Chemical mapping of a 177-nucleotide RNA with 2A3 and DMS. For DMS the reverse transcriptase was MarathonRT. The RNA was probed in 150 mM KOAc, 10 mM MgCl2 and 150 mM bicine (pH 8.5) at 24 C.
RNA sequence: GGGAACGACUCGAGUAGAGUCGAAAAGGGCUAGCGAGUGGAUGUUCCACCCCCCAGCGGUGCCGAGUGAGGCCUAUCCCGGGGAUCGGUGAAUCGUCCCGGAAUGGGGACUCCGAGGGCCCCUUCCGUUAACAAAGAGGUUCGCCUCUUUGUUAACAAAAGAAACAACAACAACAAC
Reactivity to 2A3 in 0.01 (KOAc 150mM, MgCl2 10mM, bicine 150mM(pH8.5), 24C), signal-to-noise 2, nucleotides 027 to 126: g030g000g000c030u020a030g040c010g030a020g010u040g090g160a180u170g020u060u010c010c000a020c000c010c000c000c000c010a000g050c050g080g000u090g100c010c000g020a010g030u220g020a000g000g040c020c020u020a010u000c000c010c000g000g010g010g000a130u190c020g030g050u140g070a130a080u150c010g030u050c040c020c000g000g040a020a010u040g040g010g000g090a140c010u000c010c010g010a060g000g030g050c020c000c010c020u120u040c020c060
Reactivity to DMS in 0.01 (KOAc 150mM, MgCl2 10mM, bicine 150mM(pH8.5), 24C), signal-to-noise 3, nucleotides 027 to 126: g010g010g010c020u000a080g000c010g010a030g010u000g020g010a120u010g000u000u000c000c010a120c010c010c000c000c000c040a090g000c190g000g000u000g020c000c000g010a230g020u000g020a030g010g020c000c020u000a030u000c010c000c000g020g010g000g000a060u010c030g020g020u000g010a150a120u010c010g010u000c000c000c000g000g000a020a000u000g010g000g000g000a090c000u000c010c010g010a190g010g010g000c010c010c020c040u010u010c110c080